[RMDB]
RNA sequence: GGGAACGACUCGAGUAGAGUCGAAAAUAGGGGGCCUACGGGCAAACUCACCCCAUAAGGUAGGUUAAGGCAGUACCUCGAAAUAGUAGUCACGCAGUACGCGAUAGCGAAUAUUAUUCGCUGGCAAAAUGCACAUUAAGUUCGCUUAAUGUGCAUUAAAAGAAACAACAACAACAAC
Reactivity to DMS in 0.01 (KOAc 150mM, MgCl2 10mM, bicine 150mM(pH8.5), 24C), signal-to-noise 6, nucleotides 027 to 126: u000a140g010g020g000g000g010c050c040u010a060c180g030g000g010c040a030a060a080c050u020c090a210c070c000c020c090a100u000a070a050g010g010u000a020g020g000u000u010a060a080g010g020c030a050g010u000a050c030c010u000c070g000a060a090a080u010a080g010u000a070g010u010c040a100c110g010c040a120g000u000a100c130g020c040g010a120u010a030g000c010g010a010a020u000a130u010u010a070u000u000c010g030c000u000g010g020c130a060a050
Reactivity to 2A3 in 0.01 (KOAc 150mM, MgCl2 10mM, bicine 150mM(pH8.5), 24C), signal-to-noise 3, nucleotides 027 to 126: u200a040g010g030g000g040g000c000c000u000a020c080g060g010g000c050a040a040a110c030u050c050a050c000c020c000c010a020u100a100a010g100g020u070a010g000g050u030u090a060a050g060g000c040a020g070u040a050c010c000u010c020g080a090a020a010u120a050g080u030a020g030u030c010a000c100g030c010a050g050u080a030c080g010c040g060a080u100a040g000c010g020a020a010u120a090u250u120a060u010u050c010g000c000u000g000g000c000a190a030
This 177-nucleotide RNA was probed chemically with DMS and 2A3. For DMS, 6,837 sequencing reads were counted. High DMS reactivity at an A or C suggests that its Watson-Crick edge is free. The reactions ran in a buffer of 150 mM KOAc, 10 mM MgCl2 and 150 mM bicine (pH 8.5), at 24 C. For 2A3, 4,166 sequencing reads were counted.